[RMDB]
RNA sequence: GGGAACGACUCGAGUAGAGUCGAAAAAUUCUGUAGGCGCUGCUCGCGCACCAGUGCCUCUAAGGUUGUCAGUCCGAGAUCGACAAUAUCAGACUGGAAAAGCUGCUCCUCCAUGCGCGAUGAGUUCCCCGAUGCUAGGAUUCGUCCUAGCAUCGGGAAAAGAAACAACAACAACAAC
Reactivity to 2A3 in 0.01 (KOAc 150mM, MgCl2 10mM, bicine 150mM(pH8.5), 24C), signal-to-noise 2, nucleotides 027 to 126: a000u240u140c120u230g140u100a030g000g000c020g000c000u000g000c110u170c050g000c000g000c000a080c090c000a030g000u030g000c000c010u000c010u100a290a070g190g000u230u010g070u180c020a020g010u040c000c090g080a020g020a210u120c060g040a090c110a200a000u050a020u260c010a020g000a040c000u040g060g030a050a050a050a050g050c000u000g000c000u050c040c000u000c000c000a040u000g000c010g000c050g050a150u150g100a000g090u030u140c000